[RMDB]
RNA sequence: GGGAACGACUCGAGUAGAGUCGAAAACGGCGGUCACGCCGCAGGCGGCGUCCAAGCCGCUGAAGGUGAAGUUCUCCUUUGGAACCAGCUCGCGGCUCGCGCGGCCCCCUGCCGCCGAGCCAGCAGCACGAAGGGCACAUUUCGAUGUGCCCUUCGUAAAAGAAACAACAACAACAAC
Reactivity to DMS in 0.01 (KOAc 150mM, MgCl2 10mM, bicine 150mM(pH8.5), 24C), signal-to-noise 2, nucleotides 027 to 126: c040g020g000c000g020g010u010c150a150c000g040c010c010g000c120a110g000g020c010g000g050c020g020u010c240c230a110a210g020c010c000g010c000u000g000a030a130g010g000u000g010a100a260g000u000u010c040u000c040c120u000u010u000g010g010a110a100c190c080a150g010c060u040c110g040c020g020g000c000u000c010g010c140g010c020g000g000c030c050c080c050c060u000g030c000c010g000c000c000g000a020g040c000c010a030g030c030a010g010c000